[RMDB]
RNA sequence: GGGAACGACUCGAGUAGAGUCGAAAAGCAAAAUACAACUGCCAAUAACAAGCAGUCGUCCUUUGUUCUCGCUGCCUAAGCGAGCGCACUAACAGGACCGUCGACCCGGUGAUGCUCUCUAUCCGGUAAGUCGGCGUCAGAAAAGGGAGCUCGCUGCGAUAUUUUCGCUGUUCGCAGCGAAAAUAUCAAAAGAAACAACAACAACAAC
Reactivity to 2A3 in 0.01 (KOAc 150mM, MgCl2 10mM, bicine 150mM(pH8.5), 24C), signal-to-noise 2, nucleotides 027 to 156: g010c030a010a070a070a030u190a090c090a060a010c040u020g030c040c030a120a140u230a270a060c080a080a040g020c000a010g000u040c050g010u010c040c010u090u050u060g020u020u020c020u010c020g030c000u060g070c040c200u170a060a000g000c000g000a000g000c030g010c020a040c020u110a220a020c020a080g000g020a010c000c030g000u000c000g000a000c000c010c000g000g010u010g000a020u090g000c000u010c000u020c000u010a010u000c020c000g000g020u090a160a030g020u000c000g000g010c000g000u000c010a010g040a040a100a010a000g000g000g000a000g000c030u060c060g090c100u060g020c020